[RMDB]
RNA sequence: GGGAACGACUCGAGUAGAGUCGAAAAACUAUUUGUUCUAUAGCAAAGAAACCCGAAACACAGUAUAUAUUUGUUAUAUAUGCUUUGUGGAACACAGCUGUUAGGACGUGAGCCAUCAGGGUCCAAACAUCAUGCUCCGUUUCGACGGAGCAUGAUGAAAAGAAACAACAACAACAAC
Reactivity to DMS in 0.01 (KOAc 150mM, MgCl2 10mM, bicine 150mM(pH8.5), 24C), signal-to-noise 2, nucleotides 027 to 126: a050c060u000a060u000u010u010g000u000u000c120u000a040u050a060g000c000a000a130a150g020a090a120a090c010c020c060g000a070a200a060c030a010c010a020g000u000a020u000a000u000a040u000u020u030g000u020u020a080u000a000u000a000u000g010c000u030u000u000g000u000g020g020a060a060c110a030c300a110g000c090u000g000u010u000a070g000g010a000c000g020u000g000a040g000c060c090a040u000c090a060g010g000g000u000c030c010a050a050a130
Reactivity to 2A3 in 0.01 (KOAc 150mM, MgCl2 10mM, bicine 150mM(pH8.5), 24C), signal-to-noise 2, nucleotides 027 to 126: a020c120u110a110u030u140u110g030u050u020c030u000a110u170a000g000c010a010a040a120g030a130a080a050c020c040c070g000a040a030a000c030a000c000a000g000u000a000u000a000u000a010u040u050u180g210u300u000a010u020a000u000a000u000g000c000u000u010u060g020u010g010g000a020a010c080a010c020a040g000c040u020g060u120u050a040g020g060a030c010g070u100g120a010g010c000c000a060u100c060a080g010g050g000u020c000c000a100a000a000